Structure probing data (2A3 and DMS) for a 177-nucleotide construct. For DMS, 2,067 sequencing reads were counted. 2A3 adducts were read by reverse transcription with SuperScript II with manganese. The reactions ran in a buffer of 150 mM KOAc, 10 mM MgCl2 and 150 mM bicine (pH 8.5), at 24 C. It was measured as part of the RMDB library RFM100. Values cover nucleotides 27 to 126.

[RMDB]
RNA sequence: GGGAACGACUCGAGUAGAGUCGAAAAGGGGAGGGAGGUGUGGAAGCUGGUUUGCCGGGGCCACCCAGUGUGGGCUCAGGAAGGGAAGGAAUGUGACCAAGGCUGGGUGUGGCUGGGGAGAGCACAGCAAACCCAAAGGCUUCGGCCUUUGGGUUUGAAAAGAAACAACAACAACAAC
Reactivity to 2A3 in 0.01 (KOAc 150mM, MgCl2 10mM, bicine 150mM(pH8.5), 24C), signal-to-noise 1, nucleotides 027 to 126: g070g000g000g020a210g130g020g000a150g000g000u050g040u030g020g040a050a000g080c000u070g010g150u060u100u250g020c020c000g040g050g020g050c000c000a000c000c000c000a000g020u060g000u080g020g000g080c060u030c080a040g030g140a160a050g090g000g050a120a000g120g000a070a010u020g010u060g110a040c020c020a000a040g050g000c050u050g000g030g010u130g000u030g030g000c150u130g030g000g020g040a050g000a010g000c030a000c000a000g030
Reactivity to DMS in 0.01 (KOAc 150mM, MgCl2 10mM, bicine 150mM(pH8.5), 24C), signal-to-noise 1, nucleotides 027 to 126: g000g000g000g000a180g010g000g020a120g000g030u030g000u010g000g000a060a080g020c000u020g000g030u020u000u030g020c000c030g030g040g000g000c080c020a000c040c000c140a040g010u030g010u000g020g010g030c040u020c020a050g030g000a170a140g020g000g000a040a150g080g000a150a110u010g000u000g020a050c060c000a050a140g000g000c040u000g010g000g010u020g010u040g000g000c090u010g010g030g000g000a150g000a130g000c010a030c060a060g020